[RMDB]
RNA sequence: GGGAACGACUCGAGUAGAGUCGAAAAUUAAUCGGGCUUGUUUGCGCCGCGUAUGCGCUUGCUUGCUUGCUUGCGGGCGAACGGGCUUGUUGCCUUUUGGCGCUUGCUUGCGGGCGGGCAAAAUGAACAUACACUGAUGCUUCGGCAUCAGUGUAUGAAAAGAAACAACAACAACAAC
Reactivity to 2A3 in 0.01 (KOAc 150mM, MgCl2 10mM, bicine 150mM(pH8.5), 24C), signal-to-noise 2, nucleotides 027 to 126: u080u060a030a100u090c060g050g030g070c100u090u100g040u130u140u070g050c060g000c000c030g130c030g060u110a030u200g010c050g040c000u000u020g000c010u020u040g010c010u020u000g000c040u030u030g000c030g000g010g000c020g030a050a010c020g000g010g010c040u070u200g150u110u250g020c010c000u070u060u020u230g070g000c020g000c010u020u000g030c000u000u020g000c000g020g010g000c000g000g030g000c040a010a010a020a000u130g020a030a030
Reactivity to DMS in 0.01 (KOAc 150mM, MgCl2 10mM, bicine 150mM(pH8.5), 24C), signal-to-noise 2, nucleotides 027 to 126: u000u010a070a090u010c040g010g000g020c050u010u000g020u000u010u010g000c040g030c020c070g030c150g020u000a050u000g010c040g010c070u000u000g010c010u000u000g000c010u000u010g020c010u000u010g010c000g000g000g000c000g000a020a020c090g000g000g000c000u000u000g010u010u010g010c000c010u000u010u020u010g000g000c000g000c010u000u000g000c010u000u000g020c010g010g000g000c010g000g000g010c010a010a020a080a070u000g010a130a170